[RMDB]
Structure probing data (DMS and 2A3) for a 177-nucleotide construct. The 2A3 profile rests on 3,531 reads.

RNA sequence: GGGAACGACUCGAGUAGAGUCGAAAACACCAUGACUGCCUCUUUCGGUCUGCUAGAAGGAGUGAAAGGACGGCAGGCUAUUGGGUUGGUCCUUUGGAUGAAUUUAAAGAGGUCAGUGGGGAUUUGAUCAUCCUAAUUUCUUCGGAAAUUAGGAUGAAAAAGAAACAACAACAACAAC
Reactivity to DMS in 0.01 (KOAc 150mM, MgCl2 10mM, bicine 150mM(pH8.5), 24C), signal-to-noise 7, nucleotides 027 to 126: c090a180c020c010a050u010g000a050c010u000g010c000c000u000c010u000u000u000c070g010g000u000c010u000g010c120u010a110g020a180a180g000g000a070g010u000g010a030a040a040g010g010a100c180g010g010c000a010g010g000c070u000a050u010u010g010g010g000u000u000g010g000u000c020c020u000u000u010g010g010a070u000g010a080a060u000u000u000a050a070a100g000a080g010g010u000c040a050g010u000g000g000g000g000a160u000u000u000g000a190
Reactivity to 2A3 in 0.01 (KOAc 150mM, MgCl2 10mM, bicine 150mM(pH8.5), 24C), signal-to-noise 4, nucleotides 027 to 126: c040a040c010c000a030u050g070a000c010u010g010c010c000u070c000u050u090u080c040g110g030u000c030u050g030c010u050a090g070a200a070g170g060a110g140u100g100a110a040a010g070g010a010c030g000g010c000a000g000g000c000u090a090u130u140g100g000g000u030u070g080g000u050c020c000u080u080u170g070g000a070u060g070a060a090u070u190u160a120a080a040g060a020g030g000u070c020a010g040u040g000g040g000g000a020u080u070u200g030a050
Overview:
2A3 adducts were read by reverse transcription with SuperScript II with manganese.